[RMDB]
RNA sequence: GGGAACGACUCGAGUAGAGUCGAAAAUAUGAUUGCAGGUUACCAGCAUAGUACUGAAUUUGAUGCAGUCAUCAUGAUAGAUUGUGAUUUGCAACAUCCACCUGAAUAUAUUCCGAAAAUGGUUGAACCCCCUAAUUCUAUUCGUAGAAUUAGGGGGAAAAGAAACAACAACAACAAC
Reactivity to 2A3 in 0.01 (KOAc 150mM, MgCl2 10mM, bicine 150mM(pH8.5), 24C), signal-to-noise 3, nucleotides 027 to 126: u070a010u030g110a120u000u110g020c000a010g000g020u020u020a130c020c000a000g050c010a070u040a080g160u150a140c000u000g110a100a100u150u300u030g190a110u180g090c010a000g020u020c060a020u030c030a040u030g110a080u050a170g150a130u070u110g030u090g030a060u010u000u180g040c000a040a000c000a090u090c080c030a040c100c020u000g060a060a010u140a010u010a080u020u000c020c000g040a010a060a000a100u300g140g010u010u020g020a020a020
Reactivity to DMS in 0.01 (KOAc 150mM, MgCl2 10mM, bicine 150mM(pH8.5), 24C), signal-to-noise 2, nucleotides 027 to 126: u050a030u020g000a100u000u000g020c030a020g000g000u000u000a080c060c030a030g000c050a050u000a060g040u030a120c010u000g040a090a140u070u000u020g000a140u000g030c000a060g000u000c050a010u000c070a060u020g010a180u010a100g030a120u030u050g020u000g010a000u020u010u000g000c030a030a020c060a000u000c110c080a030c010c050u000g000a010a040u000a060u000a090u000u000c010c020g000a050a060a100a090u020g010g000u000u000g000a150a080